[RMDB]
RNA sequence: GGGAACGACUCGAGUAGAGUCGAAAAAGCUGCCAUGGCAGGAGUUUGUCGAGGCGCCAGACCGUUCACCUGCUUCAGAGUCCGUGUCUCCACUCUUUUUUCCAGCUCGAGUUUUGAUGGAAAAAGGGACGCACUACCACUUCGGUGGUAGUGCGUCAAAAGAAACAACAACAACAAC
Reactivity to 2A3 in 0.01 (KOAc 150mM, MgCl2 10mM, bicine 150mM(pH8.5), 24C), signal-to-noise 2, nucleotides 027 to 126: a000g070c060u040g030c020c000a090u150g010g000c000a010g030g240a160g140u090u190u020g000u000c060g090a120g010g000c000g050c030c000a000g020a160c060c080g040u050u060c020a050c050c000u020g020c000u050u100c110a020g030a000g030u000c060c050g010u060g160u000c050u000c030c020a050c000u000c090u000u090u020u000u050u020c020c000a010g020c080u040c140g200a300g090u120u080u120u140g150a090u030g020g010a000a030a000a000a000g070g000
Structure probing data (2A3) for a 177-nucleotide construct. The RNA was probed in 150 mM KOAc, 10 mM MgCl2 and 150 mM bicine (pH 8.5) at 24 C. Reactivities are given for positions 27 through 126. It was measured as part of the RMDB library OK1LIB.